[RMDB]
Chemical mapping of a 207-nucleotide RNA with 2A3. For 2A3 the reverse transcriptase was SuperScript II with manganese.
RNA sequence: GGGAACGACUCGAGUAGAGUCGAAAACGCUUGCUCUUCGGAGCAAGCGAAAAAGAUAUGGAGACGCGUAUUGGGAGCUCUCAGUCGGAAACGACUGGUGAGCGACGAUCAAUGAUCGUCUCCUAAGUCAAAAAACAUUGACCUUCGGGUCAAUGAAGCAAUGUAUGGAGUUCGCUCCAUACAUUGCAAAAGAAACAACAACAACAAC
Reactivity to 2A3 in 0.01 (KOAc 150mM, MgCl2 10mM, bicine 150mM(pH8.5), 24C), signal-to-noise 1, nucleotides 027 to 156: c010g030c000u000u010g000c000u000c000u050u050c270g150g000a020g000c000a000a000g000c000g000a010a010a000a000a000g020a020u040a020u050g000g000a000g010a000c000g050c030g010u260a070u070u060g000g030g030a040g000c000u000c000u000c010a000g000u000c000g030g000a010a000a010c010g020a000c000u020g020g110u130g020a000g000c000g000a030c020g020a030u010c010a020a020u020g010a070u200c030g000u000c000u020c000c000u000a020a000g000u010c020a000a000a000a090a030a130c000a000u000u000g000a000c010c000u020u020c290g110g000g000u000c000a000a000u010g010a020a010
The 2A3 profile rests on 1,425 reads.